[RMDB]
RNA sequence: GGGAACGACUCGAGUAGAGUCGAAAAGGGUGUUACGGUUCCUGACGGGAACGUUCGUAUAGUACGAGAGGAACUACGAAUGGGUGCCACUGGUGUACCGGCUGUUCGAAAGAGCACGUGCCGGGCAGUAUUGAAAAUCCUUCGGGAUUUUCAAUACAAAAGAAACAACAACAACAAC
Reactivity to DMS in 0.01 (KOAc 150mM, MgCl2 10mM, bicine 150mM(pH8.5), 24C), signal-to-noise 2, nucleotides 027 to 126: g020g030g020u010g000u000u000a050c080g010g000u000u010c000c000u000g020a130c180g010g020g020a030a070c080g000u000u010c030g010u000a020u000a100g010u000a130c010g000a250g010a210g010g000a090a100c160u000a010c020g000a010a020u010g020g010g010u000g010c080c040a080c090u000g010g000u010g020u000a050c000c010g030g020c010u040g000u010u010c000g000a120a050a170g010a020g010c010a040c300g020u000g010c020c010g010g020g000c040a080
Reactivity to 2A3 in 0.01 (KOAc 150mM, MgCl2 10mM, bicine 150mM(pH8.5), 24C), signal-to-noise 1, nucleotides 027 to 126: g000g000g010u050g020u050u120a050c070g000g040u020u040c020c030u090g160a090c080g020g010g020a060a000c010g000u010u020c040g020u010a030u000a050g020u000a020c030g030a020g010a080g130g000a010a000c030u000a000c020g050a030a050u070g080g060g030u100g060c000c000a030c130u110g000g070u110g050u060a190c010c010g000g000c000u000g000u000u000c010g010a040a040a030g040a020g000c020a020c200g060u090g010c020c030g000g000g000c000a010
Conditions: 150 mM KOAc, 10 mM MgCl2 and 150 mM bicine (pH 8.5), 24 C. Chemical mapping of a 177-nucleotide RNA with DMS and 2A3. The DMS profile rests on 1,964 reads. For DMS the reverse transcriptase was MarathonRT. For 2A3 the reverse transcriptase was SuperScript II with manganese. In probing experiments dimethyl sulfate is read out at A N1 and C N3, which are open when not base-paired. Values cover nucleotides 27 to 126.